Structure probing data (2A3) for a 177-nucleotide construct. It was measured as part of the RMDB library OK1LIB. The RNA was probed in 150 mM KOAc, 10 mM MgCl2 and 150 mM bicine (pH 8.5) at 24 C. 2A3 adducts were read by reverse transcription with SuperScript II with manganese.
RNA sequence: GGGAACGACUCGAGUAGAGUCGAAAAGGCUCAGGAAACUGAGCCAAGAAUGUUCAGAGAAAAGAACUAGUGACUGAACAGAACAGAAUAAAAGUACACUAGAAAAUAGGAGCAGGAAACUGCUCCACGCUCAUGGUCCUUUCGAGGACCAUGAGCGAAAAGAAACAACAACAACAAC
Reactivity to 2A3 in 0.01 (KOAc 150mM, MgCl2 10mM, bicine 150mM(pH8.5), 24C), signal-to-noise 1, nucleotides 027 to 126: g000g000c000u000c000a040g040g030a090a070a070c030u000g000a000g000c000c000a000a000g000a090a090u040g080u000u080c000a000g030a000g110a150a240a000a000g110a010a010c000u000a000g050u020g040a070c000u000g060a020a030c000a000g020a110a060c090a020g300a140a000u100a160a170a060a000g090u120a020c000a000c000u050a000g080a030a080a080a000u160a040g000g000a000g000c000a000g000g010a000a300a120c000u000g000c000u000c000c000a030